[RMDB]
RNA sequence: GGGAACGACUCGAGUAGAGUCGAAAAGGUUGCAGAAGAUGGCAGUGUUUGGUUAGAGGCUGAUCACACCCACACAAAACACACACAAACACAUUAGAGUAGGGCGCCCUGGAAAAACCAGGUUGCGAACCCUGCCCUAUUUCGAUAGGGCAGGGUUAAAAGAAACAACAACAACAAC
Reactivity to 2A3 in 0.01 (KOAc 150mM, MgCl2 10mM, bicine 150mM(pH8.5), 24C), signal-to-noise 1, nucleotides 027 to 126: g060g020u060u030g060c020a000g000a150a020g020a110u010g140g000c040a040g000u000g120u100u020u060g080g000u000u000a030g010a080g010g000c090u060g140a220u200c000a000c000a000c010c000c000a000c030a000c030a050a050a000a000c060a000c000a000c000a000c000a020a060a000c030a000c030a050u100u100a100g030a040g120u180a010g090g030g000c000g000c000c090c000u000g040g090a020a020a020a020a020c000c000a000g020g000u010u140g050c010g020
Reactivity to DMS in 0.01 (KOAc 150mM, MgCl2 10mM, bicine 150mM(pH8.5), 24C), signal-to-noise 2, nucleotides 027 to 126: g000g010u020u020g020c060a050g000a140a080g020a060u000g020g000c060a150g050u010g030u000u020u000g000g050u020u010a090g010a140g000g020c030u000g040a090u000c090a110c180a120c050c000c010a100c050a000c150a110a030a070a060c080a030c150a070c020a010c000a000a020a110c050a010c080a050u050u000a170g000a020g010u030a030g020g010g000c050g040c010c000c010u010g070g000a070a100a030a150a190c050c020a020g000g000u000u000g000c020g050
About this RNA
Chemical mapping of a 177-nucleotide RNA with 2A3 and DMS. Conditions: 150 mM KOAc, 10 mM MgCl2 and 150 mM bicine (pH 8.5), 24 C. It was measured as part of the RMDB library OK1LIB.